The record gives the reactivity of an RNA of 207 nucleotides to 2A3. 2A3 is a SHAPE reagent: it acylates the 2'-hydroxyl of flexible nucleotides of all four kinds. For 2A3, 954 sequencing reads were counted.
RNA sequence: GGGAACGACUCGAGUAGAGUCGAAAAGCGUACUACUUUCGGGAAAGUUUCUCAACAGCCACGUUCCGAAGUAUCCCAAAUAGGAUAUGUAGAACGUGGACAUGAGAAAUAACACGAAAGUAUCGCAAAGGUCAUGUUGAUUCGUCAACAUGACCAAACAAAGAGUCUCGUUCGCGAGACUCUUUGUAAAAGAAACAACAACAACAAC
Reactivity to 2A3 in 0.01 (KOAc 150mM, MgCl2 10mM, bicine 150mM(pH8.5), 24C), signal-to-noise 2, nucleotides 027 to 156: g000c020g030u030a090c010u010a020c020u030u000u020c050g010g060g080a130a300a190g050u000u000u000c000u000c000a040a210c110a080g050c000c000a000c000g040u040u090c100c000g030a150a040g010u000a010u000c030c020c010a110a150a250u260a110g000g000a000u020a010u290g060u090a090g000a020a000c000g000u000g000g030a010c020a100u010g000a000g000a000a000a020u140a020a040c070a000c030g000a040a000a000g020u020a030u240c000g000c000a040a020a020g000g010u000c000a010u000g000u000u000g010a050u070u050c190g050u020c070a000a000c000a020u000g010a000c000c000a000a010